[RMDB]
RNA sequence: GGGAACGACUCGAGUAGAGUCGAAAAUUAGGGUGUGAAAGAUUUGAAUACAUUUCUUGAAUACAUUUCUUGGUCACAAAAGAAAGUCCUUGAUUCAUGCAAAAUUCAUUUAGCUUAUCGUUUUCAAGGUGAGCAAGAAAACAUAACACAAAUCAAAACCUACGCACUAGUUCGCUAGUGCGUAGGUAAAAGAAACAACAACAACAAC
Reactivity to 2A3 in 0.01 (KOAc 150mM, MgCl2 10mM, bicine 150mM(pH8.5), 24C), signal-to-noise 1, nucleotides 027 to 156: u130u120a040g130g030g000u040g000u010g140a110a000a070g020a000u060u050u020g040a110a050u100a070c060a040u070u030u000c000u000u010g070a070a070u100a040c060a060u050u110u000c020u050u070g090g070u000c070a050c050a080a010a010a010g080a010a060a000g040u090c000c000u000u010g000a020u050u000c030a000u070g020c000a060a050a070a100u180u060c080a080u130u080u090a010g020c020u090u000a110u280c040g070u000u010u010u000c000a000a000g000g020u040g010a040g050c000a010a010g000a000a010a010a000c030a060u170a130a010c090a000c060a040a160a030u080c000a030a060a080